Conditions: 150 mM KOAc, 10 mM MgCl2 and 150 mM bicine (pH 8.5), 24 C. Structure probing data (DMS and 2A3) for a 207-nucleotide construct. For 2A3 the reverse transcriptase was SuperScript II with manganese. For DMS, 1,925 sequencing reads were counted. DMS adducts were read by reverse transcription with MarathonRT. Source: RMDB library OK3TST, as collected in RNAgym. Values cover nucleotides 27 to 156.
[RMDB]
RNA sequence: GGGAACGACUCGAGUAGAGUCGAAAACAAAAAGCAAUAAGGAGGCGAUAAUAACUUGGCGCAUUACAGCGAACAACGGGGAAAGGCAUCACAGUUAGCCGCAAAACUCGCGCUAGUCUCAUCCGGCUGGGUCGUGGCCGAGCCGGAAACAGAAGAGCUAGUAACGUGGAUUCGUCCACGUUACUAGAAAAGAAACAACAACAACAAC
Reactivity to DMS in 0.01 (KOAc 150mM, MgCl2 10mM, bicine 150mM(pH8.5), 24C), signal-to-noise 1, nucleotides 027 to 156: c050a000a090a140a140a090g020c010a100a130u010a060a150g030g010a120g010g020c020g030a130u000a060a120u000a110a110c060u010u000g030g010c040g010c100a150u010u010a100c060a050g000c040g050a060a110c030a130a050c030g040g020g040g030a040a120a090g020g030c060a110u000c100a040c130a060g000u010u000a140g000c000c030g000c120a130a020a090a060c040u000c050g050c100g080c040u000a060g040u010c040u030c050a140u010c040c000g010g040c010u000g040g030g030u000c050g060u030g040g030c020c020g020a010g080c000c010g060g000a000a000a080c030a060g000a060a030g000a130g020
Reactivity to 2A3 in 0.01 (KOAc 150mM, MgCl2 10mM, bicine 150mM(pH8.5), 24C), signal-to-noise 4, nucleotides 027 to 156: c040a050a050a030a020a010g060c040a030a090u120a140a050g060g000a020g000g050c030g060a040u090a120a030u080a120a040c050u060u060g040g000c010g000c030a040u060u210a090c080a030g010c010g020a050a030c010a030a030c060g050g000g000g000a050a060a030g030g010c020a020u060c050a020c010a040g030u040u060a020g020c090c010g020c020a020a080a020a110c040u060c070g010c000g010c030u010a010g040u030c020u020c010a050u000c010c000g000g010c010u060g050g010g030u040c080g120u150g170g000c010c000g020a000g000c000c000g000g000a010a010a000c030a010g150a120a000g000a020g030